[RMDB]
RNA sequence: GGGAACGACUCGAGUAGAGUCGAAAACUACAAUGGCCGAGACAGUGGGAUGCAACGCCGAAAGGCGACGCUAAUCUCCGAAACUCGGUCGUAGUUCGGAUUGCGGAUUGAAACUCAUCCGCAUGAAACUAUGCUAUUAAUUCGUUAAUAGCAUAGUAAAAGAAACAACAACAACAAC
Reactivity to 2A3 in 0.01 (KOAc 150mM, MgCl2 10mM, bicine 150mM(pH8.5), 24C), signal-to-noise 9, nucleotides 027 to 126: c010u020a010c030a060a230u300g010g000c000c000g020a000g040a090c050a060g040u300g100g000g000a000u020g000c000a040a030c010g000c000c000g030a060a030a010g010g000c010g020a010c060g000c010u100a070a030u000c010u000c000c010g040a060a050a040c000u000c000g000g000u000c000g000u000a000g000u010u100c050g060g030a050u020u020g000c000g000g010a010u030u100g120a210a120a070c080u060c060a010u000c000c000g000c000a000u010g000a010a000
Reactivity to DMS in 0.01 (KOAc 150mM, MgCl2 10mM, bicine 150mM(pH8.5), 24C), signal-to-noise 9, nucleotides 027 to 126: c010u000a010c030a170a100u040g010g010c000c000g010a010g010a080c130a110g010u040g000g000g000a020u000g000c010a060a290c010g010c000c000g000a090a100a170g010g010c000g010a020c300g000c010u010a070a030u000c000u000c000c000g010a100a110a070c000u000c000g000g010u000c000g010u000a010g000u000u000c090g010g010a100u000u000g010c010g000g000a020u010u010g000a100a120a130c280u020c060a050u000c000c000g010c000a010u000g000a170a090

Chemical mapping of a 177-nucleotide RNA with 2A3 and DMS. For DMS the reverse transcriptase was MarathonRT. The data come from the RNA Mapping Database (RMDB), libraries RFM100 and RFMREP.